[RMDB]
Record summary:
An RNA of 177 nucleotides, treated with 2A3 and DMS and read out base by base. Source: RMDB library OK2TST, as collected in RNAgym. The DMS profile rests on 3,298 reads. For DMS the reverse transcriptase was MarathonRT.
RNA sequence: GGGAACGACUCGAGUAGAGUCGAAAACAGAUAGAAAGCACUAAUGAUAAAUGACGUCAUAUCUCCGGAAUUUGAUGAAAACGGCCGAGCACUGCGCCGUAUUCGUAGUUUUGUCCGCCGUCAGGGAUAUUUACUAGCUCUUCGGAGCUAGUAAAUAAAAAGAAACAACAACAACAAC
Reactivity to 2A3 in 0.01 (KOAc 150mM, MgCl2 10mM, bicine 150mM(pH8.5), 24C), signal-to-noise 2, nucleotides 027 to 126: c020a010g090a070u200a060g130a040a190a010g040c070a050c110u130a170a090u090g070a040u060a090a140a090u110g040a030c040g000u010c040a060u030a080u160c080u030c070c000g000g070a050a020u180u110u110g040a100u110g010a070a000a000a040c000g000g000c000c010g030a030g080c090a030c220u110g000c060g020c030c020g000u030a040u010u040c010g010u030a040g000u060u000u020u200g050u000c020c000g000c000c030g010u020c010a000g030g010g000a000
Reactivity to DMS in 0.01 (KOAc 150mM, MgCl2 10mM, bicine 150mM(pH8.5), 24C), signal-to-noise 4, nucleotides 027 to 126: c070a070g010a100u000a080g000a110a120a120g010c070a060c070u010a060a080u000g010a110u010a060a100a090u010g000a090c080g010u000c050a090u010a070u000c040u000c060c020g000g000a060a070u010u010u000g010a050u000g000a000a020a110a030c030g000g020c040c030g020a120g020c110a090c200u000g010c150g010c030c030g000u000a020u000u000c010g000u000a060g000u000u000u000u010g000u000c010c020g000c100c020g020u000c050a050g010g010g010a130